[RMDB]
An RNA of 177 nucleotides, treated with DMS and 2A3 and read out base by base.
The DMS profile rests on 1,025 reads.
The reactions ran in a buffer of 150 mM KOAc, 10 mM MgCl2 and 150 mM bicine (pH 8.5), at 24 C.

RNA sequence: GGGAACGACUCGAGUAGAGUCGAAAAACACCUGACGGUGCAUCAUCCGCAGACGAAUGAACUGCUCUGGCAGCAUGAGACCAGACAUGCGUACAACGCACAGGGACUGGCGAACCGCUGUAUACCGCAUCACCGUUCACUUCGGUGAACGGUGAUGAAAAGAAACAACAACAACAAC
Reactivity to DMS in 0.01 (KOAc 150mM, MgCl2 10mM, bicine 150mM(pH8.5), 24C), signal-to-noise 2, nucleotides 027 to 126: a080c090a100c110c000u010g020a080c120g010g030u000g000c020a050u010c070a130u030c030c040g040c050a100g000a140c030g000a080a070u010g010a070a090c060u000g000c040u020c100u000g000g010c000a070g010c100a050u000g010a210g020a070c050c000a010g000a070c040a120u000g000c010g040u000a120c230a090a040c050g010c000a010c180a040g020g000g000a070c060u000g020g000c020g010a040a130c090c100g020c020u000g000u000a100u000a030c020c080g010
Reactivity to 2A3 in 0.01 (KOAc 150mM, MgCl2 10mM, bicine 150mM(pH8.5), 24C), signal-to-noise 2, nucleotides 027 to 126: a000c030a050c000c000u040g100a080c090g000g020u040g000c050a070u030c030a020u000c040c020g000c000a020g050a090c030g150a090a120u250g030a130a110c020u030g010c050u010c050u090g070g000c010a020g010c020a020u080g040a030g010a140c000c020a000g020a040c020a030u010g000c010g040u090a130c040a140a080c180g030c000a010c000a060g160g000g130a130c010u030g000g010c010g000a060a010c030c050g030c000u040g060u040a060u050a090c000c040g020